This 177-nucleotide RNA was probed chemically with DMS and 2A3. For DMS the reverse transcriptase was MarathonRT. Values cover nucleotides 27 to 126. 2A3 adducts were read by reverse transcription with SuperScript II with manganese.

RNA sequence: GGGAACGACUCGAGUAGAGUCGAAAACUGACAUGCGAGGCGAUCCGGCCUCUGCACUGCUUGAAGUGCUGGAUCCAGAGCAGAACGUAGCGUUCAGCGACCACUACCUGGAAGUGGAUUACGAUCACCGUCAUCACUGCUUCGGCAGUGAUGACGGAAAAGAAACAACAACAACAAC
Reactivity to DMS in 0.01 (KOAc 150mM, MgCl2 10mM, bicine 150mM(pH8.5), 24C), signal-to-noise 1, nucleotides 027 to 126: c070u010g030a120c090a120u000g010c000g010a110g050g030c150g000a050u050c090c020g000g050c000c000u010c000u000g060c010a150c120u040g030c190u020u000g000a160a030g030u020g030c000u000g010g000a000u000c000c070a100g000a300g040c060a030g020a090a080c080g030u000a080g000c170g020u000u000c030a030g010c070g000a100c100c050a070c040u000a050c170c000u050g010g010a090a030g000u030g010g030a260u000u000a110c060g010a090u000c090a100
Reactivity to 2A3 in 0.01 (KOAc 150mM, MgCl2 10mM, bicine 150mM(pH8.5), 24C), signal-to-noise 1, nucleotides 027 to 126: c050u030g070a040c000a190u050g030c000g050a060g050g080c080g000a090u030c020c030g070g000c010c000u010c000u000g070c070a070c090u200g020c020u060u120g080a130a000g000u020g140c030u010g020g030a000u000c020c010a040g020a020g020c050a020g010a090a010c060g050u100a070g040c030g020u060u060c050a060g000c030g020a030c000c000a010c010u070a070c000c160u040g010g020a080a000g020u010g000g050a010u060u080a040c050g030a020u100c050a080